[RMDB]
RNA sequence: GGGAACGACUCGAGUAGAGUCGAAAAGAGCAAAGAUGUGCCCCGGGACCCCCGGCACCUUCCAGUGGAUUUCCUUGCGGAAAGGAUGUUGGCGGUCCCUGUGACCUGUGGAGACACGGCCAGAUCUGACUUGGGUUCUAUUCGUAGAACCCAAGUCAAAAGAAACAACAACAACAAC
Reactivity to DMS in 0.01 (KOAc 150mM, MgCl2 10mM, bicine 150mM(pH8.5), 24C), signal-to-noise 1, nucleotides 027 to 126: g000a100g000c060a090a100a110g000a150u010g010u020g000c130c000c000c010g090g000g000a000c000c000c060c020c000g020g010c000a000c010c010u000u000c000c010a240g000u010g010g000a260u050u090u050c050c010u000u000g010c130g000g000a030a120a040g000g010a080u000g000u000u000g000g000c300g010g000u000c000c000c010u030g050u000g000a080c010c040u060g060u000g000g020a170g000a260c100a010c000g000g050c000c030a000g020a030u020c030u010
Reactivity to 2A3 in 0.01 (KOAc 150mM, MgCl2 10mM, bicine 150mM(pH8.5), 24C), signal-to-noise 3, nucleotides 027 to 126: g060a000g040c060a020a080a040g070a070u110g030u070g050c000c000c010c000g000g000g000a000c000c000c030c000c000g000g000c000a000c000c000u000u000c010c000a090g010u100g030g060a160u100u080u300c050c060u080u210g080c060g010g010a070a070a160g080g000a210u000g000u010u020g010g000c020g000g000u020c000c000c000u010g000u020g040a060c030c000u060g010u040g040g020a070g000a020c030a010c020g020g020c010c000a040g020a110u100c030u080
This 177-nucleotide RNA was probed chemically with DMS and 2A3. As a SHAPE reagent, 2A3 marks flexible, mostly unpaired nucleotides at the ribose 2'-OH. It was measured as part of the RMDB library RFM100. Conditions: 150 mM KOAc, 10 mM MgCl2 and 150 mM bicine (pH 8.5), 24 C. For DMS the reverse transcriptase was MarathonRT. Values are in units of 0.01, from 0 to 300, in steps of 10.